An RNA of 207 nucleotides, treated with 2A3 and read out base by base. The 2A3 profile rests on 631 reads.
[RMDB]
RNA sequence: GGGAACGACUCGAGUAGAGUCGAAAACUUUAGCCUUCUGUAGGGGAAGGCACCGAGCAGGGCAGCUUGGGGCCAAGGGGGCACUGCCUGGUGGGUGCAGCUGUGGCAGAGGUGCAUGGCACCCCAUGCCAGAAUGAUGGGACCAGGCAAGGCCCAACAGUAGGGAGCAGUUCGCUGCUCCCUACUGAAAAGAAACAACAACAACAAC
Reactivity to 2A3 in 0.01 (KOAc 150mM, MgCl2 10mM, bicine 150mM(pH8.5), 24C), signal-to-noise 1, nucleotides 027 to 156: c000u010u120u130a030g000c000c000u010u060c040u120g190u260a040g000g080g000g000a020a010g000g030c000a000c000c000g030a030g000c030a070g000g010g040c010a030g010c000u040u050g030g010g010g000c000c030a030a030g110g010g010g000g000c020a030c170u000g000c000c000u000g000g000u060g000g150g000u100g030c020a020g000c080u030g030u040g080g010c010a010g010a050g150g000u000g030c140a270u050g090g000c000a020c000c020c010c020a120u070g000c000c000a020g050a080a040u040g020a010u090g060g000g060a030c010c000a000g010g040c000a000a010g020g040c000c000c000a000a010